Source: RMDB library TTRINS, as collected in RNAgym. An RNA of 177 nucleotides, treated with DMS and read out base by base.
RNA sequence: GGGAACGACUCGAGUAGAGUCGAAAAGAUAUGGACAGUAGUUCCUCCAUACGCAAGCGAUAAGCUCCGGUCGGAAACGACCGAAGAGCUUUUGACGCUUGAAAUGGAGGAACUACUGUCCUAAGUCGUUACCAUUGUAGUUCGCUACAAUGGUAACAAAAGAAACAACAACAACAAC
Reactivity to DMS in 0.01 (KOAc 150mM, MgCl2 10mM, bicine 150mM(pH8.5), 24C), signal-to-noise 3, nucleotides 027 to 126: g010a090u000a300u010g000g000a010c000a010g010u000a010g010u000u000c010c000u000c010c000a010u010a040c300g010c000a000a000g010c010g030a170u000a030a030g010c000u000c010c020g020g010u010c010g010g010a100a090a220c000g000a020c000c000g000a100a050g020a010g010c000u000u010u000u000g020a260c100g010c010u000u000g000a010a030a020u000g000g010a000g020g010a000a000c010u000a000c000u000g010u000c000c000u020a020a070g010u010c140

DMS adducts were read by reverse transcription with MarathonRT.